RNA sequence: GGGAACGACUCGAGUAGAGUCGAAAAGUGGUCGAGUGCGAAGCACUGGGGUAGAGAAAUAAAAAGAGAGAGAUCUACCCCGUCAGUCAGUCACUCUCUGUCUGAAUCUCUCUCUCAAAGACCACGACCCUACGGACUCCUUCGGGAGUCCGUAGGGAAAAGAAACAACAACAACAAC
Reactivity to 2A3 in 0.01 (KOAc 150mM, MgCl2 10mM, bicine 150mM(pH8.5), 24C), signal-to-noise 1, nucleotides 027 to 126: g000u000g000g000u030c050g020a000g000u020g010c070g230a220a060g040c000a000c050u050g000g000g020g000u010a000g030a000g070a090a300a090u180a000a110a030a040a000g000a000g000a000g000a000g000a000u000c000u000a000c020c010c000c000g000u000c000a000g000u000c000a020g000u030c060a050c220u080c000u030c010u000g000u000c000u000g000a050a040u000c000u030c000u000c000u040c000u000c030a110a070a030g000a000c000c000a000c000g020a020